[RMDB]
RNA sequence: GGGAACGACUCGAGUAGAGUCGAAAAGUGGUGCGCGGAUCGCUUGACGAGUUGGCGAUCUGGGCGGCCGGUGGUGUGCUCGGCGAGAUCACCGUGGUGGUGGCGGGCGCCGCCCCCCACGCCGAACCCAUUACGCGUCAUUCGUGACGCGUAAUGGAAAAGAAACAACAACAACAAC
Reactivity to DMS in 0.01 (KOAc 150mM, MgCl2 10mM, bicine 150mM(pH8.5), 24C), signal-to-noise 2, nucleotides 027 to 126: g010u000g000g010u000g010c030g000c040g010g000a020u000c020g020c010u000u020g030a130c130g010a140g020u010u000g010g000c020g020a010u010c010u000g000g000g040c020g000g010c040c010g010g030u000g000g000u000g010u000g000c110u010c000g030g000c060g020a110g020a100u000c040a050c040c030g020u010g000g010u010g020g020u010g020g020c090g010g010g020c210g010c060c020g030c000c010c000c020c000c020a050c080g020c050c040g000a100a110c190
Reactivity to 2A3 in 0.01 (KOAc 150mM, MgCl2 10mM, bicine 150mM(pH8.5), 24C), signal-to-noise 2, nucleotides 027 to 126: g100u050g020g020u050g000c120g010c040g050g010a010u000c020g030c020u060u160g100a150c140g040a100g170u150u120g120g010c020g000a000u000c000u000g050g040g010c000g000g010c000c010g000g000u040g020g040u060g030u110g030c020u050c090g030g000c040g040a070g040a080u060c040a020c080c040g020u090g010g100u170g010g010u080g000g010c070g000g000g130c070g020c030c020g010c000c010c010c020c000c000a000c000g000c040c020g020a080a060c000

An RNA of 177 nucleotides, treated with DMS and 2A3 and read out base by base.
The RNA was probed in 150 mM KOAc, 10 mM MgCl2 and 150 mM bicine (pH 8.5) at 24 C.
It was measured as part of the RMDB library OK2TRN.
For 2A3, 2,208 sequencing reads were counted.